RNA sequence: GGGAACGACUCGAGUAGAGUCGAAAACAUGAACCUCGACGGCAAGACGGGUAUAGGUUGGCUCGGCUACAUCGUCAUCGGCGGUAUCGCCGGCUGGCUCGCCAGCAAGAUCGUUAAGGGGGGCGGCGGUGCUAAAAGUAUUCGUACUUUUAGCACCAAAAGAAACAACAACAACAAC
Reactivity to 2A3 in 0.01 (KOAc 150mM, MgCl2 10mM, bicine 150mM(pH8.5), 24C), signal-to-noise 3, nucleotides 027 to 126: c040a110u170g070a060a040c010c000u040c040g030a020c010g010g000c020a050a050g060a110c010g040g050g060u090a140u120a130g050g030u060u060g020g000c060u040c160g000g000c000u030a020c010a080u050c030g040u020c030a140u100c060g020g000c020g000g050u090a070u140c030g000c000c000g000g020c010u010g000g020c030u030c080g020c010c000a020g000c010a000a050g020a220u040c020g000u070u100a090a100g020g010g010g020g000g030c010g050g000c020
Reactivity to DMS in 0.01 (KOAc 150mM, MgCl2 10mM, bicine 150mM(pH8.5), 24C), signal-to-noise 4, nucleotides 027 to 126: c100a100u010g000a110a100c050c010u000c050g010a050c070g010g020c130a100a080g000a070c070g000g020g030u010a120u010a090g020g010u010u010g010g010c020u010c030g010g000c020u000a080c100a060u000c030g020u010c030a100u010c110g020g010c000g000g010u000a090u000c080g010c000c000g000g020c040u000g000g000c040u010c260g010c010c010a020g000c030a100a080g000a070u000c060g010u010u010a080a090g010g000g000g010g000g000c120g000g000c140
This 177-nucleotide RNA was probed chemically with 2A3 and DMS. Values cover nucleotides 27 to 126. Conditions: 150 mM KOAc, 10 mM MgCl2 and 150 mM bicine (pH 8.5), 24 C. For 2A3, 3,730 sequencing reads were counted. It was measured as part of the RMDB library OK2TST.